RNA sequence: GGGAACGACUCGAGUAGAGUCGAAAAGAUAUGGACUUUGUAAAGCCGAUAAGCACGUGUCGGAAACGACACAGUGCUUUUGACGGCUGCAAAGUCCUAAGUCAAAACGAGGAGUUCGCUCCUCGAAUCUCAUACUGUGGUUCGCCACAGUAUGAGAAAAAGAAACAACAACAACAAC
Reactivity to DMS in 0.01 (KOAc 150mM, MgCl2 10mM, bicine 150mM(pH8.5), 24C), signal-to-noise 3, nucleotides 027 to 126: g010a000u000a120u020g000g000a010c000u000u010u010g000u010a090a100a070g020c000c000g020a120u010a020a020g010c000a000c000g010u000g000u000c000g010g010a050a010a090c020g010a020c000a000c010a040g060u000g010c000u000u000u000u000g020a140c110g020g020c000u000g000c000a010a010a010g010u000c000c000u000a000a050g000u000c000a100a080a120a170c010g010a010g010g010a030g010u000u010c300g010c000u000c000c000u000c020g000a040a060
Reactivity to 2A3 in 0.01 (KOAc 150mM, MgCl2 10mM, bicine 150mM(pH8.5), 24C), signal-to-noise 3, nucleotides 027 to 126: g000a010u010a020u040g000g000a010c010u150u030u030g040u130a300a290a030g000c030c120g140a250u140a240a000g000c010a000c020g030u010g000u010c030g000g000a040a020a030c010g010a000c010a000c010a000g000u000g000c000u030u000u000u010g050a040c030g000g020c000u020g010c000a000a000a000g000u010c010c010u000a000a000g000u010c040a030a010a110a090c020g000a000g000g010a010g010u090u130c230g130c140u000c000c000u000c000g010a000a050
Source information:
The record gives the reactivity of an RNA of 177 nucleotides to DMS and 2A3. It was measured as part of the RMDB library TTRDES. DMS adducts were read by reverse transcription with MarathonRT. The reactions ran in a buffer of 150 mM KOAc, 10 mM MgCl2 and 150 mM bicine (pH 8.5), at 24 C. The 2A3 profile rests on 4,854 reads. The DMS profile rests on 4,325 reads.